[RMDB]
RNA sequence: GGGAACGACUCGAGUAGAGUCGAAAAGGGUAGAUCUUCGGAUCUACCCAAAAGGAGCAACCAACGAAGGAAGUGCUAGCAUAAGCGUGCUGGCUAGCACUAAAAGGUUCCGCUUCGGCGGAACCAACUUACUCCCAAGGUUCGCCUUGGGAGUAAGAAAAGAAACAACAACAACAAC
Reactivity to DMS in 0.01 (KOAc 150mM, MgCl2 10mM, bicine 150mM(pH8.5), 24C), signal-to-noise 2, nucleotides 027 to 126: g030g010g040u000a000g000a000u010c000u000u000c200g040g000a000u000c010u000a000c000c000c000a010a000a020a070g030g010a080g000c110a080a130c040c070a070a140c160g000a110a140g000g010a200a050g010u020g010c000u000a000g010c000a060u000a090a060g030c060g010u000g010c010u000g000g000c000u000a000g000c020a010c000u000a020a050a120a070g010g020u000u000c010c000g020c020u000u000c170g000g030c000g020g010a000a000c000c000a000a010
Reactivity to 2A3 in 0.01 (KOAc 150mM, MgCl2 10mM, bicine 150mM(pH8.5), 24C), signal-to-noise 1, nucleotides 027 to 126: g000g010g000u010a000g000a010u020c050u090u090c300g040g000a000u020c000u000a010c020c000c000a000a000a010a020g020g000a030g020c000a000a060c020c000a020a050c090g070a040a060g130g040a070a060g020u010g020c000u000a000g020c010a170u050a270a060g040c070g130u130g030c050u000g000g030c010u000a000g000c010a000c000u030a010a000a010a000g000g000u000u000c020c000g010c060u040u060c240g040g010c030g000g070a000a000c000c000a000a000